[RMDB]
RNA sequence: GGGAACGACUCGAGUAGAGUCGAAAAGGUAUUAUUCUCUCGUCGGCGCAGAGAAUAUACCGACCGCGGAACGUCGCGUAGCCAUGCCGUCGUCUAGCUUACGGAGCGGCCGCAUGGUGGCCGUGCCACGAUUGCAGAGUUUCGACUCUGCAAUCGUAAAAGAAACAACAACAACAAC
Reactivity to 2A3 in 0.01 (KOAc 150mM, MgCl2 10mM, bicine 150mM(pH8.5), 24C), signal-to-noise 2, nucleotides 027 to 126: g010g000u000a000u200u040a030u070u060c000u000c000u010c030g130u010c130g210g210c080g000c140a010g000a010g000a020a000u020a010u010a010c010c000g000a020c000c020g050c050g040g020a170a090c020g030u060c040g050c030g050u080a010g000c000c000a010u000g000c000c010g020u050c000g040u030c030u050a060g070c080u130u140a110c140g050g000a040g050c000g010g000c000c010g030c010a030u050g040g030u050g010g010c020c010g000u020g000c010c020
Reactivity to DMS in 0.01 (KOAc 150mM, MgCl2 10mM, bicine 150mM(pH8.5), 24C), signal-to-noise 3, nucleotides 027 to 126: g000g010u000a000u000u010a000u000u010c000u000c010u000c110g010u000c120g010g040c110g050c220a020g010a020g000a020a010u010a020u000a000c000c010g000a130c060c040g040c130g010g010a060a040c070g000u000c070g000c050g020u010a300g000c010c020a020u000g010c000c290g010u000c030g000u010c040u010a060g010c140u010u000a070c210g000g000a090g000c000g000g010c000c180g000c020a020u010g010g020u000g020g030c050c010g010u000g000c030c050